[RMDB]
RNA sequence: GGGAACGACUCGAGUAGAGUCGAAAAUAAACAGUCCGGACGAACUCAUGGAAUGGGAAGCAAGAAUCGGAAAUUUGUCAAUAUGUAUUCUUAUGAUGCAGAUGAUUUCUCGUUUGUUCGAUACGUAACUAUAAAGGGGUUUCGACCCCUUUAUAGUAAAAGAAACAACAACAACAAC
Reactivity to DMS in 0.01 (KOAc 150mM, MgCl2 10mM, bicine 150mM(pH8.5), 24C), signal-to-noise 8, nucleotides 027 to 126: u040a070a070a110c120a130g010u020c040c010g010g000a080c040g010a080a100c040u010c050a070u030g010g030a070a280u010g010g000g020a090a090g020c090a080a080g010a090a040u010c050g000g000a030a050a070u010u000u010g000u020c080a080a060u040a140u010g000u010a020u020u010c040u030u020a090u050g010a070u000g010c010a020g000a190u010g000a020u010u000u000c000u010c060g010u020u000u010g000u000u000c020g000a100u030a030c070g010u030a050
Reactivity to 2A3 in 0.01 (KOAc 150mM, MgCl2 10mM, bicine 150mM(pH8.5), 24C), signal-to-noise 6, nucleotides 027 to 126: u100a000a030a020c050a030g110u020c020c000g000g020a020c010g020a020a030c010u060c070a060u170g060g100a120a020u060g070g070g030a050a010g030c040a080a020g030a110a030u050c040g050g130a020a050a070u100u090u100g050u040c020a030a040u070a070u300g060u030a090u060u050c010u030u220a170u300g040a030u030g020c020a020g000a090u060g010a010u040u030u020c060u010c010g050u010u010u090g030u020u010c020g010a010u020a190c060g040u050a070
This 177-nucleotide RNA was probed chemically with DMS and 2A3.
The DMS profile rests on 21,147 reads.
The reactions ran in a buffer of 150 mM KOAc, 10 mM MgCl2 and 150 mM bicine (pH 8.5), at 24 C.